Conditions: 150 mM KOAc, 10 mM MgCl2 and 150 mM bicine (pH 8.5), 24 C. Structure probing data (DMS) for a 177-nucleotide construct. For DMS, 1,471 sequencing reads were counted.
RNA sequence: GGGAACGACUCGAGUAGAGUCGAAAAGAUAUGGAGCCAUGCAACUUUUGACGAUGUAUAUAUUCCUCGCUGUCGGAAACGACAGGCGAGGAAUAUAUACAUCGAUAAGUUGGGUGGCUCCUAAGUCGUAUUGCAGAAGGUUCGCCUUCUGCAAUACAAAAGAAACAACAACAACAAC
Reactivity to DMS in 0.01 (KOAc 150mM, MgCl2 10mM, bicine 150mM(pH8.5), 24C), signal-to-noise 1, nucleotides 027 to 126: g020a100u000a300u000g020g030a000g040c000c000a010u000g000c020a010a000c010u000u010u020u020g030a230c260g000a020u000g030u000a010u020a000u000a010u000u000c000c000u000c020g000c000u000g000u000c000g020g000a150a130a290c010g020a040c000a030g030g050c000g050a000g000g000a000a000u000a000u000a020u020a000c000a000u000c000g010a010u000a000a010g050u000u000g000g020g090u000g000g000c000u000c020c000u000a000a060g020u000c100